[RMDB]
RNA sequence: GGGAACGACUCGAGUAGAGUCGAAAAGCCAUAACCUUGUCACGGAAUUCUUUCAUCCACUUUGCCUUGACUUGCUCUCCUUGCCGUUCAUCCUUUUCCUCGUCAGAAUGAACCUCUGAUAUCCACGAGUGGUCAGAGUUUUCGAACUCUGACCACUAAAAGAAACAACAACAACAAC
Reactivity to 2A3 in 0.01 (KOAc 150mM, MgCl2 10mM, bicine 150mM(pH8.5), 24C), signal-to-noise 1, nucleotides 027 to 126: g070c010c010a010u130a030a100c030c020u050u110g060u070c070a020c070g020g060a020a050u130u050c040u140u190u140c020a100u000c030c000a020c020u090u190u070g070c000c000u040u130g000a070c000u040u080g010c010u030c000u020c000c020u000u070g070c010c000g010u030u040c000a080u090c000c000u020u040u050u160c010c000u070c030g050u000c010a030g040a100a050u090g030a090a060c010c020u010c000u040g040a010u020a110u170c050c040a060c050g070
Reactivity to DMS in 0.01 (KOAc 150mM, MgCl2 10mM, bicine 150mM(pH8.5), 24C), signal-to-noise 1, nucleotides 027 to 126: g010c010c010a120u010a070a140c070c040u000u030g010u000c030a050c090g000g000a090a060u000u000c070u000u000u000c040a130u000c030c050a110c110u000u000u030g010c040c030u030u000g000a090c120u000u010g010c040u000c030u000c050c030u010u000g010c070c030g000u010u000c030a040u000c020c030u000u000u010u000c010c000u000c150g000u000c060a100g000a080a100u000g000a090a090c180c070u000c030u000g000a070u000a060u000c070c030a140c180g000